[RMDB]
RNA sequence: GGGAACGACUCGAGUAGAGUCGAAAACAAGAAUCGGACGAUUUCCCCAUGACGCUGGAGACAUCCUGGAAGGGGAAAGAGGAGGGUGGAAGAAAAAGGGGUGGGCCCCCCCGAUCCGAGGGGCCCGGUGCCCUCCGGUUCGCCGGAGGGAAAAGAAACAACAACAACAAC
Reactivity to DMS in 0.01 (KOAc 150mM, MgCl2 10mM, bicine 150mM(pH8.5), 24C), signal-to-noise 5, nucleotides 027 to 129: c100a140a080g020a020a050u020c010g040g040a070c100g040a200u010u040u020c020c000c000c010a080u080g000a110c150g000c090u000g000g000a090g030a120c190a010u020c040c040u040g000g000a120a070g010g010g000g000a020a060a030g020a100g000g040a060g000g060g040u050g040g040a110a060g040a050a040a050a080a090g000g010g020g070u050g060g010g020c000c000c000c000c000c000c000g040a080u060c050c050g000a050g000g000g000g000c000c000c010g020g050u080g080
Reactivity to 2A3 in 0.01 (KOAc 150mM, MgCl2 10mM, bicine 150mM(pH8.5), 24C), signal-to-noise 6, nucleotides 027 to 129: c070a020a020g100a070a050u100c030g030g040a010c030g060a050u010u010u050c010c000c010c010a100u150g050a050c070g050c150u050g030g000a010g020a040c040a090u030c000c020u040g020g060a050a050g020g010g000g020a000a040a010g050a020g030g010a030g000g020g040u100g050g020a060a040g040a040a070a000a010a010g040g010g000g020u150g030g020g010c000c000c000c000c000c000c010g030a090u060c020c020g020a040g000g000g000g000c010c000c000g000g020u060g040
An RNA of 170 nucleotides, treated with DMS and 2A3 and read out base by base.